[RMDB]
An RNA of 207 nucleotides, treated with DMS and 2A3 and read out base by base.
RNA sequence: GGGAACGACUCGAGUAGAGUCGAAAAUUUAGAGGCGUUAUGAUAGAAAAGGUGUACAGGUUAAGAUUAUACACCGUAGCGGUUAUGUAAAAGAGAACGCGGCGACUGAGGAGCCGGAUGAGGUUUACGAAUUGUAAUCGACCUCGUACGGAGAACCCCAUAUGCGUAUCUUCGGAUACGCAUAUGGAAAAGAAACAACAACAACAAC
Reactivity to DMS in 0.01 (KOAc 150mM, MgCl2 10mM, bicine 150mM(pH8.5), 24C), signal-to-noise 2, nucleotides 027 to 156: u000u000u000a210g000a060g000g010c010g050u010u000a060u000g010a190u020a120g000a160a080a070a030g040g010u000g020u000a030c040a030g020g020u010u000a040a170g010a110u000u000a020u000a030c020a020c010c010g040u000a110g000c040g030g010u010u000a020u000g020u010a010a080a090a110g000a130g000a050a070c030g000c030g020g070c020g030a110c030u020g010a140g040g000a300g020c010c010g030g000a040u000g020a020g040g030u000u000u000a080c020g000a040a190u020u000g010u010a040a080u000c130g020a050c010c010u000c020g050u000a060c020g040g010a100g000a050a170c080c070
Reactivity to 2A3 in 0.01 (KOAc 150mM, MgCl2 10mM, bicine 150mM(pH8.5), 24C), signal-to-noise 2, nucleotides 027 to 156: u050u070u060a120g000a030g010g000c000g000u060u050a030u090g120a060u080a160g120a030a080a030a010g040g000u030g000u040a060c040a060g050g040u070u110a010a070g040a050u080u110a040u090a050c030a010c010c010g000u000a020g040c050g030g000u070u090a030u040g110u090a020a000a120a070g070a000g010a040a020c030g000c000g040g000c000g030a060c030u060g000a060g080g030a040g040c000c000g000g000a000u040g000a000g010g010u020u070u170a030c030g000a050a130u140u110g070u140a000a130u080c030g010a040c000c000u020c000g000u000a030c030g000g020a040g060a080a050c000c030
The RNA was probed in 150 mM KOAc, 10 mM MgCl2 and 150 mM bicine (pH 8.5) at 24 C. DMS adducts were read by reverse transcription with MarathonRT. Source: RMDB library OK3TST, as collected in RNAgym.